[RMDB]
RNA sequence: GGGAACGACUCGAGUAGAGUCGAAAACCACAUCUUCGGAUGUGGAAAAAGAUAUGGACGUCGAGGAUCAGCAUGCAAGCGUGUGCGUCGGAAACGACGCCACGUGAUGACCAUGCUGGGAGACGUCCUAAGUCAAAAAGACGGGUUCGCCCGUCAACUUUUCUUUGUUGUUCGCAACAAAGAAAAGAAAAGAAACAACAACAACAAC
Reactivity to DMS in 0.01 (KOAc 150mM, MgCl2 10mM, bicine 150mM(pH8.5), 24C), signal-to-noise 2, nucleotides 027 to 156: c000c000a010c000a000u010c010u000u000c300g040g010a000u000g030u010g050g010a010a020a070a140a090g030a090u010a300u000g020g000a040c000g050u000c000g020a190g020g000a170u000c020a020g020c000a000u010g010c000a150a300g020c010g030u000g000u010g040c010g030u000c000g000g030a150a160a230c010g010a040c030g010c000c000a000c000g030u010g010a040u020g000a140c300c000a020u000g010c010u000g000g010g010a190g010a040c020g000u000c010c000u000a010a040g010u000c030a060a110a100a120a110g000a040c000g000g010g010u000u000c150g010c010c010c030g000u000c000a010a050
Reactivity to 2A3 in 0.01 (KOAc 150mM, MgCl2 10mM, bicine 150mM(pH8.5), 24C), signal-to-noise 3, nucleotides 027 to 156: c000c000a000c000a000u000c000u050u090c270g180g000a010u000g000u020g010g070a010a110a070a030a000g060a030u070a040u110g000g000a000c010g010u020c020g020a280g010g040a020u010c000a000g000c000a000u020g000c040a020a210g010c000g000u020g110u220g030c000g000u010c000g010g010a070a080a000c010g000a000c000g000c000c000a000c010g020u000g000a020u090g010a020c070c020a000u000g000c010u000g000g010g000a010g000a000c000g000u000c000c000u000a000a000g010u000c000a000a000a010a050a060g010a010c000g010g040g010u040u110c140g100c070c010c000g030u020c000a010a000
Background: Chemical mapping of a 207-nucleotide RNA with DMS and 2A3. Reactivities are given for positions 27 through 156. 2A3 adducts were read by reverse transcription with SuperScript II with manganese. For DMS the reverse transcriptase was MarathonRT. The RNA was probed in 150 mM KOAc, 10 mM MgCl2 and 150 mM bicine (pH 8.5) at 24 C. Source: RMDB library RNAMAK, as collected in RNAgym.